[RMDB]
RNA sequence: GGGAACGACUCGAGUAGAGUCGAAAAGGUCCGGUGCCCGUCGACGGUGCUUCCGCAGAGUCCUCGACCACGAGGCCGAUCACACGGCCGUCUUGCGCAACGAUCGGACCGCCGCUGUUGCCCGGCCCUUGCUGCAUUAUUUCGAUAAUGCAGCAAGAAAAGAAACAACAACAACAAC
Reactivity to 2A3 in 0.01 (KOAc 150mM, MgCl2 10mM, bicine 150mM(pH8.5), 24C), signal-to-noise 4, nucleotides 027 to 126: g020g000u050c020c020g000g050u200g010c020c020c030g080u170c020g030a030c030g000g020u030g020c000u070u070c100c090g080c120a030g020a000g070u030c010c000u010c010g110a160c050c120a180c170g000a010g000g000c010c000g010a010u010c020a050c030a020c090g080g000c010c000g040u050c100u130u260g040c120g000c030a040a070c090g030a030u020c010g000g010a020c010c000g000c000c000g010c040u070g060u220u110g020c000c000c000g000g010c010c020
Reactivity to DMS in 0.01 (KOAc 150mM, MgCl2 10mM, bicine 150mM(pH8.5), 24C), signal-to-noise 7, nucleotides 027 to 126: g010g010u010c000c010g010g010u020g030c020c160c110g000u000c040g020a030c060g010g010u000g000c020u000u000c050c220g010c220a200g010a070g010u000c010c010u000c010g010a140c190c280a100c090g000a050g010g010c030c000g000a040u000c050a080c210a220c260g000g000c010c020g000u020c100u000u010g010c140g020c050a070a080c230g000a040u000c010g000g000a020c020c010g020c020c010g010c040u010g000u010u000g000c040c010c000g000g000c020c050